The record gives the reactivity of an RNA of 177 nucleotides to DMS and 2A3. It was measured as part of the RMDB library OK2TRN. DMS adducts were read by reverse transcription with MarathonRT. The DMS profile rests on 1,885 reads. For 2A3, 1,945 sequencing reads were counted. For 2A3 the reverse transcriptase was SuperScript II with manganese.
RNA sequence: GGGAACGACUCGAGUAGAGUCGAAAACAGACGGAUGGCCUCUCCCAUGUCGUGGGUCACGAAGACCACGGUCUUCCUGAGGCGCCGUUGGAUCGCGAGGAACUCCUCCUGGAGUCGGGAGCGGGUGCACCAAUCGCGAAUUCGUUCGCGAUUGGUGAAAAGAAACAACAACAACAAC
Reactivity to DMS in 0.01 (KOAc 150mM, MgCl2 10mM, bicine 150mM(pH8.5), 24C), signal-to-noise 2, nucleotides 027 to 126: c120a220g010a040c020g010g000a040u020g030g020c000c000u000c010u020c010c010c020a090u000g000u010c140g000u000g000g000g000u000c100a110c230g030a090a130g020a030c020c010a080c150g050g010u000c020u010u000c010c130u000g010a010g010g010c030g000c010c020g000u000u000g040g000a100u000c040g030c080g000a140g010g000a140a090c000u000c020c010u000c080c070u010g010g010a090g000u000c080g010g000g000a140g020c120g010g000g010u000g010
Reactivity to 2A3 in 0.01 (KOAc 150mM, MgCl2 10mM, bicine 150mM(pH8.5), 24C), signal-to-noise 2, nucleotides 027 to 126: c030a050g040a030c010g000g000a040u090g300g040c000c000u000c040u020c030c040c000a020u110g130u150c110g070u060g030g010g040u090c080a030c190g120a080a050g030a020c000c000a020c090g020g010u000c010u060u020c000c100u050g000a000g030g000c010g000c010c000g000u000u030g020g050a130u130c060g030c070g110a060g030g060a080a040c010u030c000c000u040c000c070u070g010g160a170g180u270c000g000g020g020a030g040c070g020g030g010u000g010